[RMDB]
The record gives the reactivity of an RNA of 177 nucleotides to 2A3 and DMS. For 2A3 the reverse transcriptase was SuperScript II with manganese. The reactions ran in a buffer of 150 mM KOAc, 10 mM MgCl2 and 150 mM bicine (pH 8.5), at 24 C. DMS (dimethyl sulfate) methylates the pairing face of unpaired adenines and cytosines. Source: RMDB library OK2TST, as collected in RNAgym.
RNA sequence: GGGAACGACUCGAGUAGAGUCGAAAAGGGUCCGCCAUUCUGUGUGACUUUGGAGAAAUGACAAGUGCCUGGACUUGACCUCUUCAUAACUGCAUACUUUGUGAUGGUUACACAAAACAAGGUAGGAUAAAUAUAUCCUGUUCGCAGGAUAUAUUUAAAAAGAAACAACAACAACAAC
Reactivity to 2A3 in 0.01 (KOAc 150mM, MgCl2 10mM, bicine 150mM(pH8.5), 24C), signal-to-noise 6, nucleotides 027 to 126: g070g010g020u010c010c010g000c020c010a070u100u020c050u050g040u010g020u030g050a040c000u050u070u080g050g010a050g020a060a130a110u170g050a060c010a060a020g020u010g080c020c040u080g040g050a040c000u020u020g020a070c010c020u040c030u050u030c030a070u050a230a100c030u100g000c020a050u040a140c050u090u110u090g020u040g030a060u050g020g030u020u060a020c050a010c000a030a040a010a010c020a050a010g050g010u060a130g040g020a040
Reactivity to DMS in 0.01 (KOAc 150mM, MgCl2 10mM, bicine 150mM(pH8.5), 24C), signal-to-noise 9, nucleotides 027 to 126: g010g000g020u000c020c030g010c050c040a130u000u000c070u010g010u000g020u010g010a050c050u000u010u000g010g010a060g010a040a090a110u010g010a140c050a040a040g010u000g010c050c040u000g000g000a130c030u000u000g000a130c080c130u000c030u000u010c050a040u010a080a110c170u010g010c060a080u000a040c100u000u010u000g010u000g010a200u000g000g000u000u010a070c100a070c010a000a030a130a020c090a040a040g000g010u000a050g020g010a130